[RMDB]
RNA sequence: GGGAACGACUCGAGUAGAGUCGAAAAGAUAUGGAUUGACUACCCACCAAUUGUAACCGAAGAACUCGGAAACGAGGGAGGUUACUGUUGAGGUCAAUCCUAAGUCAAAGACAGGUUCGCCUGUCAAGGCAGCAUAUAGGUUCGCCUAUAUGCUGCCAAAAGAAACAACAACAACAAC
Reactivity to 2A3 in 0.01 (KOAc 150mM, MgCl2 10mM, bicine 150mM(pH8.5), 24C), signal-to-noise 1, nucleotides 027 to 126: g090a050u240a130u300g020g000a010u020u010g010a020c010u170a280c020c040c050a060c010c000a000a010u020u010g000u020a020a000c010c020g240a300a050g030a040a070c010u020c020g070g000a100a090a020c010g000a000g030g010g020a060g000g030u000u000a000c030u020g020u000u000g050a030g020g000u010c000a000a000u000c000c030u040a070a020g090u110c110a160a030a040g000a010c010a000g000g080u080u120c240g140c030c000u070g000u000c000a010a000
Reactivity to DMS in 0.01 (KOAc 150mM, MgCl2 10mM, bicine 150mM(pH8.5), 24C), signal-to-noise 1, nucleotides 027 to 126: g020a070u010a130u000g030g020a020u000u010g000a030c030u000a120c060c060c010a300c110c030a000a000u000u020g010u000a000a000c000c010g000a140a270g010a120a090c000u000c010g000g000a120a120a090c000g000a010g000g020g010a070g020g000u020u000a000c010u000g000u010u000g000a020g030g020u000c000a000a020u000c000c000u000a060a090g020u020c080a130a130a110g000a000c000a000g040g000u020u020c100g030c000c000u000g020u000c020a100a070